[RMDB]
RNA sequence: GGGAACGACUCGAGUAGAGUCGAAAAGUCUAGCGAAUGGAUCCCACCCGGGAGACACGCAAGUCGCGAAUUAGGCCGACCGGCCAAGGUCAAUUGCAGAACUCAACUGCAUGAGUAAGCUAGACGACACCCACGGUGGAUUCGUCCACCGUGGGUGAAAAGAAACAACAACAACAAC
Reactivity to DMS in 0.01 (KOAc 150mM, MgCl2 10mM, bicine 150mM(pH8.5), 24C), signal-to-noise 1, nucleotides 027 to 126: g030u000c000u000a020g020c000g000a230a200u010g000g070a010u000c000c000c000a110c300c020c100g060g020g000a100g000a160c020a150c030g030c010a030a100g000u000c200g030c010g020a160a020u000u000a110g020g000c000c010g000a240c070c080g020g010c000c000a030a000g050g000u010c010a010a200u000u020g000c050a000g000a200a020c090u020c190a170a160c000u000g000c010a010u000g010a190g000u000a070a150g000c000u000a050g000a000c000g000a150
Reactivity to 2A3 in 0.01 (KOAc 150mM, MgCl2 10mM, bicine 150mM(pH8.5), 24C), signal-to-noise 1, nucleotides 027 to 126: g000u000c000u000a000g000c000g090a140a070u050g070g000a030u000c000c000c000a000c030c030c030g020g020g050a050g000a020c060a010c060g000c090a120a010g170u170c040g010c010g050a060a140u180u110a240g030g090c030c020g070a100c040c000g000g050c000c000a000a020g020g010u050c010a010a070u070u030g000c000a010g070a200a090c040u080c100a060a100c050u030g000c000a000u020g040a020g070u010a030a020g050c000u000a010g000a010c000g020a000
Source: RMDB library OK2TRN, as collected in RNAgym.
Chemical mapping of a 177-nucleotide RNA with DMS and 2A3.
The reactions ran in a buffer of 150 mM KOAc, 10 mM MgCl2 and 150 mM bicine (pH 8.5), at 24 C.